[RMDB]
RNA sequence: GGGAACGACUCGAGUAGAGUCGAAAAGCUUCGCUUCGGCGAAGCACGGCAUCGUGAGAUGCCGAGGUACACUUCGGUGUACCAGAGCACGGUGACGUGCUCAGACCACCGUUCGCGGUGGUCAACUGUAGCGUUCGCGCUACAGAGUUCUUAUCAAGAGAAGCAGAGGGACUGGCCCGACGAAGCUUCAGCAACCGGUGUAAUGGCGAAAGCCAUGACCAAGGUGCUAAAUCCAGCAAGCUCGAACAGCUUGGAAGAUAAGAACUAGAAUGGCGUUCGCGCCAUUCAAAAGAAACAACAACAACAAC
Reactivity to DMS in 0.01 (KOAc 150mM, MgCl2 10mM, bicine 150mM(pH8.5), 24C), signal-to-noise 3, nucleotides 027 to 266: g000c010u000u000c000g020c000u010u030c160g010g000c000g020a010a000g020c010a040c020g000g000c000a000u000c000g000u030g010a250g000a010u000g020c000c000g000a010g010g000u000a010c000a000c000u000u030c240g020g030u000g010u000a010c000c010a120g000a020g000c000a030c000g010g000u030g000a230c000g020u000g020c030u000c000a110g000a020c000c000a010c000c000g040u000u010c210g030c000g010g030u000g000g000u010c010a020a140c010u010g000u010a000g020c000g020u000u030c230g030c010g030c000u000a010c000a020g000a060g010u000u000c020u010u000a000u000c010a180a140g000a130g010a010a020g010c000a010g010a040g010g010g010a300c020u000g000g000c040c000c000g010a080c160g010a130a100g000c000u000u000c020a060g010c010a040a050c010c020g000g020u010g010u010a070a010u010g010g000c000g020a110a060a170g000c020c000a000u000g000a020c020c020a050a070g010g000u000g000c000u000a050a080a100u010c000c010a020g000c020a030a000g000c000u010c150g040a190a280c130a050g000c010u000u000g000g010a050a030g010a030u000a000a010g010a040a010c000u000a100
Reactivity to 2A3 in 0.01 (KOAc 150mM, MgCl2 10mM, bicine 150mM(pH8.5), 24C), signal-to-noise 5, nucleotides 027 to 266: g000c000u000u010c000g010c010u060u120c300g120g000c010g000a000a000g000c000a000c010g010g000c000a000u000c000g060u060g150a160g000a060u000g020c000c000g000a060g010g000u010a000c000a010c020u080u130c280g090g010u000g000u000a000c000c000a000g000a000g010c000a000c000g030g080u130g070a050c020g000u000g010c000u000c000a000g000a000c000c000a010c020c010g020u040u070c300g020c020g120g000u000g000g000u000c000a000a030c010u000g000u000a000g000c010g020u040u050c300g040c010g000c110u000a000c000a000g040a010g000u000u000c000u000u010a010u010c040a090a030g040a010g000a140a000g000c010a000g000a010g020g000g010a020c000u020g050g050c000c000c020g060a110c010g000a020a000g000c000u000u010c000a000g000c000a030a060c010c010g000g040u070g130u210a110a050u010g010g000c000g050a070a010a000g000c000c000a000u010g010a000c020c010a030a120g000g000u000g000c000u020a010a020a060u040c010c010a010g100c010a070a000g000c000u090c100g120a150a070c050a070g000c010u010u010g030g020a020a020g000a010u000a000a000g000a000a000c000u000a030